[RMDB]
Source information:
Structure probing data (DMS and 2A3) for a 177-nucleotide construct.
RNA sequence: GGGAACGACUCGAGUAGAGUCGAAAACAUCAGUCGUUCGCGACUGAUGAAACGUGCAAGCGCUGCACGAAAAAGUCGAUCGAAUACCGAUCGACAAGGGCUAAAGAUAGGCCUUCGGGCCUAUCAACUAAGAUACGAGCUUCGGCUCGUAUCUUAGAAAAGAAACAACAACAACAAC
Reactivity to DMS in 0.01 (KOAc 150mM, MgCl2 10mM, bicine 150mM(pH8.5), 24C), signal-to-noise 2, nucleotides 027 to 126: c000a000u000c000a020g000u000c000g030u000u040c220g010c000g020a000c010u010g000a000u010g020a070a090a140c000g030u000g030c010a030a050g000c050g000c000u000g000c000a000c020g000a010a080a040a080a040g020u000c000g010a000u000c010g010a290a210u020a100c190c010g020a000u000c000g010a000c010a020a000g000g000g000c020u000a100a090a120g000a020u000a010g010g020c000c000u000u000c170g060g050g010c000c000u000a010u000c000a040a210
Reactivity to 2A3 in 0.01 (KOAc 150mM, MgCl2 10mM, bicine 150mM(pH8.5), 24C), signal-to-noise 2, nucleotides 027 to 126: c010a000u000c000a000g000u000c000g030u050u130c240g010c000g080a000c000u000g000a000u000g010a030a000a000c010g020u000g000c030a100a060g050c160g030c080u040g000c020a000c000g170a090a010a010a000a000g000u000c000g010a010u000c010g000a080a040u140a300c150c020g000a000u000c010g000a000c000a000a000g040g000g010c020u060a100a010a030g000a000u010a000g010g020c010c000u010u090c240g000g000g000c000c000u000a000u000c000a000a000
About this RNA: 2A3 is a SHAPE reagent: it acylates the 2'-hydroxyl of flexible nucleotides of all four kinds. For DMS, 1,451 sequencing reads were counted.